[RMDB]
RNA sequence: GGGAACGACUCGAGUAGAGUCGAAAAGUACCCUUGUUCGCAAGGGUACAAAGACAGACUUCACUGUCAUAAAGAAGGUAACAUCUCAGUUACAAUAAGACAAAAGCACCUACUUCGGUAGGUGCAAGGUACUUUACGUGUUCGCACGUAAAGUACCAAAAGAAACAACAACAACAAC
Reactivity to DMS in 0.01 (KOAc 150mM, MgCl2 10mM, bicine 150mM(pH8.5), 24C), signal-to-noise 1, nucleotides 027 to 126: g000u000a000c000c000c010u000u000g000u000u010c230g100c000a040a010g010g000g000u000a000c010a010a110a120g000a010c010a010g000a090c060u000u000c140a150c000u010g000u000c020a040u000a070a070a150g000a070a010g000g000u000a000a030c000a050u000c050u000c080a090g010u030u000a010c000a110a080u040a070a040g020a060c160a070a030a030a120g000c000a000c000c000u000a000c000u000u000c210g030g000u010a000g000g010u000g000c000a000a010
Reactivity to 2A3 in 0.01 (KOAc 150mM, MgCl2 10mM, bicine 150mM(pH8.5), 24C), signal-to-noise 2, nucleotides 027 to 126: g010u010a010c000c000c000u000u020g020u030u040c170g050c170a010a000g000g010g000u010a000c000a000a000a000g000a000c020a020g000a040c030u090u000c210a040c120u030g000u020c010a020u160a020a170a040g150a040a020g110g020u010a010a030c030a160u120c090u040c170a050g000u010u010a010c030a050a140u220a150a030g120a070c090a020a120a010a000g000c000a000c000c000u000a010c020u000u050c220g050g010u000a000g000g000u000g050c000a000a000
The data come from the RNA Mapping Database (RMDB), library M2PK50. The record gives the reactivity of an RNA of 177 nucleotides to DMS and 2A3. 2A3 adducts were read by reverse transcription with SuperScript II with manganese.